[RMDB]
RNA sequence: GGGAACGACUCGAGUAGAGUCGAAAAAGCACCUUCCGCUCCGGAUCGGUCACCCCCGGAAGGGCGAUCCCCACCCCGAGGAUCACCUCCGGAAGCAGGUCCUCCUCCCUGAGGAGCUCGCGAAUCAGCGUUACUGAGAAUUCGUUCUCAGUAACGCAAAAGAAACAACAACAACAAC
Reactivity to 2A3 in 0.01 (KOAc 150mM, MgCl2 10mM, bicine 150mM(pH8.5), 24C), signal-to-noise 1, nucleotides 027 to 126: a000g050c060a020c010c000u020u050c020c010g090c100u120c090c110g020g040a100u110c080g020g010u030c020a060c000c050c000c000c010g000g000a080a070g120g000g000c080g010a030u020c010c000c010c000a140c000c070c020c020g040a020g000g010a000u030c000a020c020c000u000c020c020g060g030a090a000g000c050a010g060g120u000c000c010u060c010c000u000c050c030c000u000g010a000g030g000a000g030c020u040c070g030c020g040a040a070u180c040a070
Reactivity to DMS in 0.01 (KOAc 150mM, MgCl2 10mM, bicine 150mM(pH8.5), 24C), signal-to-noise 2, nucleotides 027 to 126: a140g010c110a070c050c020u020u010c030c030g030c100u010c080c070g000g000a060u000c130g020g000u000c090a120c010c030c040c020c000g020g000a070a030g010g000g020c120g010a010u020c010c010c010c030a300c080c030c040c060g010a090g060g000a010u000c070a080c000c010u020c060c020g000g000a070a150g000c040a060g000g000u000c040c000u000c030c050u000c020c040c030u000g000a050g020g000a040g020c030u000c130g000c000g010a130a070u010c110a130